[RMDB]
RNA sequence: GGGAACGACUCGAGUAGAGUCGAAAACAAGCAGUGCAUUUAAGAAAUCCUGAGAAAUACUGGUAAAGGUAGAGAAGAGAGACAUGGAAAAGAAGAAUGCAAUAAAGAUCAUCAUCAAGCCAGUUGCCACUACGGGCAAUCAGGGCCCCACCUGGCUUAUCAGCCUUGAAUUCGUUCAAGGCUGAUAAAAAGAAACAACAACAACAAC
Reactivity to 2A3 in 0.01 (KOAc 150mM, MgCl2 10mM, bicine 150mM(pH8.5), 24C), signal-to-noise 1, nucleotides 027 to 156: c110a000a020g000c000a010g050u020g020c040a010u150u150u190a100a040g040a040a150a000u040c040c030u020g000a020g060a060a160a030u090a090c050u050g040g010u160a010a170a060g020g000u030a070g000a010g000a200a000g020a000g000a000g000a020c030a070u050g000g000a010a130a000a000g030a010a000g000a020a010u050g000c040a050a020u090a210a020a070g070a010u100c050a000u000c000a000u030c030a090a030g000c020c000a020g050u020u050g030c020c020a090c080u300a050c070g020g000g030c000a000a030u030c020a060g080g000g040c000c000c000c000a020c020c020u010g010g000c000u000
Notes:
Conditions: 150 mM KOAc, 10 mM MgCl2 and 150 mM bicine (pH 8.5), 24 C. This 207-nucleotide RNA was probed chemically with 2A3. Values are in units of 0.01, from 0 to 300, in steps of 10. As a SHAPE reagent, 2A3 marks flexible, mostly unpaired nucleotides at the ribose 2'-OH.